[RMDB]
RNA sequence: GGGAACGACUCGAGUAGAGUCGAAAAGUGCCGGCAAUACAGUGUGUAUGGAGGUCUCAAUGGCUCGGAAGUGCCAGCAAGCCGGCGUAGAUAUUAGCAGACGUAUGGGCGUAAGACUUUUAUUGAAAAAAGUACAUAAGCUUCGGCUUAUGUACAACAGGACUUGAGAGUUCGCUCUCAAGUCCUGAAAAGAAACAACAACAACAAC
Reactivity to 2A3 in 0.01 (KOAc 150mM, MgCl2 10mM, bicine 150mM(pH8.5), 24C), signal-to-noise 1, nucleotides 027 to 156: g080u050g020c010c010g000g020c000a030a120u120a080c090a090g140u040g070u040g000u140a030u040g020g070a050g060g020u020c010u000c040a040a060u040g000g000c000u020c080g080g100a120a020g040u000g010c000c030a010g060c030a070a020g000c000c020g010g010c000g000u000a000g000a050u080a010u160u040a080g050c050a000g070a080c020g070u120a090u120g100g130g020c040g010u010a080a080g000a030c000u000u000u090u220a230u100u100g080a070a020a020a000a100a030g000u000a010c000a000u000a000a000g030c000u040u030c150g020g000c000u000u000a000u000g010u000a000c000a000a000